RNA sequence: GGGAACGACUCGAGUAGAGUCGAAAAUGUUGACGAGCGGCUCGCGGAUAUUGGCAUAGGAAACUCCCGGCAGACUGCCGAGAAAGGCAUCGGUCGCGUUCAGCGUCUCGAUCCGGGCGCCGAAUCCGAUGCUAUACUCGUUCGCGAGUAUAGCAUCAAAAGAAACAACAACAACAAC
Reactivity to 2A3 in 0.01 (KOAc 150mM, MgCl2 10mM, bicine 150mM(pH8.5), 24C), signal-to-noise 4, nucleotides 027 to 126: u140g010u060u050g060a100c090g020a050g040c030g030g000c050u070c050g130c010g030g000a030u050a090u140u150g040g000c030a090u110a140g110g040a090a070a010c040u020c010c020c000g000g000c000a010g060a200c130u070g000c000c020g030a050g200a090a100a030g020g010c000a020u020c010g010g000u020c010g000c010g040u080u130c040a050g020c020g040u010c080u090c130g030a020u030c030c000g020g000g000c010g000c020c000g000a020a030u060c030c050
Reactivity to DMS in 0.01 (KOAc 150mM, MgCl2 10mM, bicine 150mM(pH8.5), 24C), signal-to-noise 3, nucleotides 027 to 126: u020g020u000u000g030a100c060g000a140g010c010g000g000c050u000c070g020c020g000g000a030u000a070u010u000g010g010c060a030u020a070g000g000a110a090a130c080u000c020c050c010g010g020c030a090g010a060c190u000g000c010c020g010a090g010a030a080a120g010g010c040a040u000c000g010g040u030c050g050c090g000u010u000c100a140g000c000g000u000c000u040c090g000a080u010c110c050g010g030g000c130g010c010c000g000a030a020u040c080c090